[RMDB]
RNA sequence: GGGAACGACUCGAGUAGAGUCGAAAAGCAGCAUCUUUGUUACUGACGGUCGACCGUCCUUGUGGUUGGAACGACGAAACAGAAUAUAGGGAAUGAUUGGUUGAUCGUUAAGAUCUGCCAAUCGCAAGGGUAAUUCUAACUUCGGUUAGAAUUGCCCAAAAGAAACAACAACAACAAC
Reactivity to 2A3 in 0.01 (KOAc 150mM, MgCl2 10mM, bicine 150mM(pH8.5), 24C), signal-to-noise 9, nucleotides 027 to 126: g080c060a010g010c010a080u040c060u050u110u060g060u070u090a150c030u030g060a040c040g070g020u040c010g030a070c010c000g040u030c000c010u210u250g130u230g050g030u050u130g040g030a230a090c010g040a000c020g020a090a070a020c030a020g100a110a020u170a030u120a100g070g010g090a080a120u160g010a030u000u010g010g010u010u040g000a010u000c020g040u140u190a130a020g000a000u000c000u010g000c000c000a000a000u000c000g000c010a020a120
Reactivity to DMS in 0.01 (KOAc 150mM, MgCl2 10mM, bicine 150mM(pH8.5), 24C), signal-to-noise 8, nucleotides 027 to 126: g020c080a100g010c080a080u020c050u000u000u010g000u010u010a100c040u000g000a150c110g010g010u000c030g000a140c020c020g000u000c010c020u020u030g020u030g000g010u010u020g010g000a110a100c060g020a070c070g010a090a070a190c060a060g000a100a050u020a070u020a070g010g000g000a100a080u030g010a010u000u000g000g010u000u000g010a000u000c000g010u020u060a100a140g000a000u000c000u000g010c000c000a010a000u000c000g010c170a060a100

Structure probing data (2A3 and DMS) for a 177-nucleotide construct. The 2A3 profile rests on 33,344 reads. Reactivities are given for positions 27 through 126. For DMS, 28,985 sequencing reads were counted.